The record gives the reactivity of an RNA of 177 nucleotides to 2A3. Reactivities are rounded to 0.1 and cut off at 0 and 3. Reactivities are given for positions 27 through 126. For 2A3, 546 sequencing reads were counted. For 2A3 the reverse transcriptase was SuperScript II with manganese.

[RMDB]
RNA sequence: GGGAACGACUCGAGUAGAGUCGAAAACACUAUUCAAUUGGGUGUGACUUCACAUCUGUCUGGGCACUCCAAUCAAAUUGCUGGGGUUGUUCUGUUGGAUGGGAACCGUUCCACUCAGGAGCAGGCAUGUGGGCAUCGAAUUCGUUCGAUGCCCACAAAAAGAAACAACAACAACAAC
Reactivity to 2A3 in 0.01 (KOAc 150mM, MgCl2 10mM, bicine 150mM(pH8.5), 24C), signal-to-noise 2, nucleotides 027 to 126: c240a080c150u180a210u090u120c050a130a070u130u010g000g000g070u000g030u140g010a020c000u010u000c000a040c000a000u000c030u030g210u010c020u000g000g000g020c050a050c000u010c000c060a010a140u050c070a100a150a300u090u160g020c020u020g000g000g000g000u190u030g000u060u030c080u050g030u020u090g080g000a010u060g000g010g010a000a040c070c060g000u050u000c030c000a000c000u070c000a000g000g020a050g000c070a030g140g000c060a050